[RMDB]
RNA sequence: GGGAACGACUCGAGUAGAGUCGAAAAGAAGCAUGUUUGUAUUACCCCGGCGAAUGCCAGUAAUACCUUUGUAGUUCGCUACUUUGAUAUAGGAGGCGUAUGCCGGGCCUAUAUCGUUUCAUGCGAAGGGUAUGCUAUGGUUCGCCAUAGCAUACCCAAAAGAAACAACAACAACAAC
Reactivity to 2A3 in 0.01 (KOAc 150mM, MgCl2 10mM, bicine 150mM(pH8.5), 24C), signal-to-noise 3, nucleotides 027 to 126: g220a000a000g000c010a000u140g040u140u150u150g040u070a040u000u030a020c020c030c030c040g010g000c020g120a230a050u300g000c000c000a000g000u030a020a050u050a020c020c040u050u000u070g020u040a030g070u030u050c070g010c140u040a030c000u120u160u140g010a000u000a000u010a030g010g090a110g040g000c020g040u120a080u140g000c000c000g000g010g000c030c000u030a020u010a010u010c000g080u050u120u060c020a010u010g010c000g070a070a020
Reactivity to DMS in 0.01 (KOAc 150mM, MgCl2 10mM, bicine 150mM(pH8.5), 24C), signal-to-noise 2, nucleotides 027 to 126: g020a050a140g030c060a030u020g000u000u000u000g020u010a070u000u000a020c060c030c100c140g010g000c000g030a100a040u130g000c000c040a210g010u000a010a030u000a000c000c230u030u000u000g020u010a050g030u010u050c160g000c060u020a060c060u000u040u000g000a010u000a030u000a000g000g010a290g000g000c040g020u060a110u050g000c000c020g050g050g000c030c070u000a000u000a000u000c020g000u010u030u010c060a030u000g000c020g000a030a150

Source information:
An RNA of 177 nucleotides, treated with 2A3 and DMS and read out base by base. The RNA was probed in 150 mM KOAc, 10 mM MgCl2 and 150 mM bicine (pH 8.5) at 24 C. High DMS reactivity at an A or C suggests that its Watson-Crick edge is free.